[RMDB]
RNA sequence: GGGAACGACUCGAGUAGAGUCGAAAAGAAAGAAAGAAAGGGUGGUCGAGGGAAUCUGAGAAGGCGCACAAGGUUUGUGUCCAAUACAGUCCACACCUUGCGCUACUCAGGUCUGCUCGUGCCCUAAGUUAAAUGCGGAGUUCGCUCCGCAUUUAACAAAAGAAACAACAACAACAAC
Reactivity to 2A3 in 0.01 (KOAc 150mM, MgCl2 10mM, bicine 150mM(pH8.5), 24C), signal-to-noise 6, nucleotides 027 to 126: g100a010a030a000g100a020a090a020g080a060a120a040g020g000g020u060g030g140u110c000g000a010g010g010g010a060a080u010c000u020g000a000g030a120a110g060g000c010g000c010a030c040a110a010g040g050u020u110u090g100u020g010u010c030c040a060a030u220a150c080a040g020u020c020c000a010c000a000c030c000u000u010g000c000g000c000u020a030c000u000c000a000g000g010u000c010u030g110c000u000c000g000u010g000c000c000c000u020a050a000
Reactivity to DMS in 0.01 (KOAc 150mM, MgCl2 10mM, bicine 150mM(pH8.5), 24C), signal-to-noise 2, nucleotides 027 to 126: g030a090a100a040g000a090a030a150g000a080a080a040g000g000g050u000g020g000u000c000g040a020g010g000g000a060a030u000c000u010g000a020g000a230a150g020g020c050g010c040a040c240a080a010g040g020u010u010u000g020u000g000u030c040c050a050a120u060a100c200a170g000u020c090c000a020c050a030c020c000u000u000g010c010g000c000u000a140c030u000c000a000g000g000u000c010u000g000c000u000c010g030u030g000c000c020c030u000a010a070